[RMDB]
Conditions: 150 mM KOAc, 10 mM MgCl2 and 150 mM bicine (pH 8.5), 24 C.
This 177-nucleotide RNA was probed chemically with 2A3.
Reactivities are given for positions 27 through 126.

RNA sequence: GGGAACGACUCGAGUAGAGUCGAAAAGGCUGCACCUAUAAUGAUCUGGUCGAUCACAAGAUCGACAUGGAAGUGGCCCGCACACGCUCGCGUCCGCUGCCGUCGGGCCGCGUGACGCGCUUCCAGGAUCCGGCGGACGGUUCGCCGUCCGCCGGAUAAAAGAAACAACAACAACAAC
Reactivity to 2A3 in 0.01 (KOAc 150mM, MgCl2 10mM, bicine 150mM(pH8.5), 24C), signal-to-noise 1, nucleotides 027 to 126: g040g000c020u020g030c000a050c000c100u070a040u050a170a110u280g150a080u080c090u300g030g010u030c000g000a010u000c000a000c300a300a080g000a000u000c000g030a000c030a000u100g020g000a110a000g030u000g000g030c000c040c040g040c000a050c020a000c090g030c030u100c000g040c000g000u000c000c000g000c000u000g000c000c000g200u300c190g090g030g000c000c000g000c000g000u000g000a000c010g030c040g000c030u050u080c000c030a000g010g010